[RMDB]
RNA sequence: GGGAACGACUCGAGUAGAGUCGAAAAUUUGUACUUUUAGUGGAGACGGGGUUUUGCCAUAUUGGCCAGGCUGGUCUUAAACUCCUGACCUCAAGUGAUCUGCCUGCUUCGGCCUCCCAAAGUGCUGGGAUCGUAGGUGUGAGCCACUGAGGCUCACGGACGACAGAUUGUUCGCAAUCUGUCGUCCAAAAGAAACAACAACAACAAC
Reactivity to 2A3 in 0.01 (KOAc 150mM, MgCl2 10mM, bicine 150mM(pH8.5), 24C), signal-to-noise 1, nucleotides 027 to 156: u190u110u090g020u020a030c020u020u070u060u040a150g050u300g180g000a000g000a000c000g000g000g110g040u040u220u300u090g000c050c000a150u200a210u300u300g020g000c000c000a000g010g000c060u060g000g070u010c000u060u200a130a240a020c100u080c000c010u020g060a060c010c070u070c100a110a040g070u020g030a000u000c000u030g000c000c000u000g000c020u000u000c030g000g000c040c000u040c000c000c030a000a030a000g030u000g060c080u020g000g030g060a060u110c050g120u160a150g160g090u030g040u000g040a000g020c070c020a180c170u100g060a060g070g000c000u000c000a000c000
Description
Conditions: 150 mM KOAc, 10 mM MgCl2 and 150 mM bicine (pH 8.5), 24 C. The record gives the reactivity of an RNA of 207 nucleotides to 2A3. Reactivities are rounded to 0.1 and cut off at 0 and 3. The data come from the RNA Mapping Database (RMDB), library OK3TST. For 2A3, 373 sequencing reads were counted.